[RMDB]
RNA sequence: GGGAACGACUCGAGUAGAGUCGAAAACGGACUUCGAGGGAUUGCUCAUUAACACAGGUUAUGUAGUAAUAUAGCCUUAGAAGUCUCUCGAUAGAAUGUCAUGCAGAAUUAUGACAUUAAUCGUCUAGGUACAGGGACAUUUCGAUGUUUCUGUACCAAAAGAAACAACAACAACAAC
Reactivity to DMS in 0.01 (KOAc 150mM, MgCl2 10mM, bicine 150mM(pH8.5), 24C), signal-to-noise 9, nucleotides 027 to 126: c170g000g000a050c010u000u010c000g010a050g010g000g010a040u000u000g000c030u010c050a060u020u020a040a050c080a220c300a090g020g010u000u000a010u000g000u050a040g010u010a020a030u010a080u030a140g020c000c000u000u010a110g000a030a010g000u000c000u000c070u010c000g000a020u010a050g010a020a000u000g000u000c000a000u000g010c260a150g030a130a140u060u030a010u010g000a010c000a000u000u000a110a050u010c060g000u010c080u020a100
Reactivity to 2A3 in 0.01 (KOAc 150mM, MgCl2 10mM, bicine 150mM(pH8.5), 24C), signal-to-noise 9, nucleotides 027 to 126: c050g020g010a010c000u000u000c000g010a010g010g010g020a020u010u020g020c020u030c120a040u130u240a080a020c120a010c040a120g300g010u010u010a010u030g120u130a030g040u030a070a050u090a030u070a130g130c000c000u010u020a060g000a020a000g000u000c000u000c000u000c000g010a010u010a050g170a020a010u000g000u000c000a000u030g050c100a050g140a270a050u230u110a010u060g000a000c000a000u010u030a020a040u050c050g040u020c060u070a050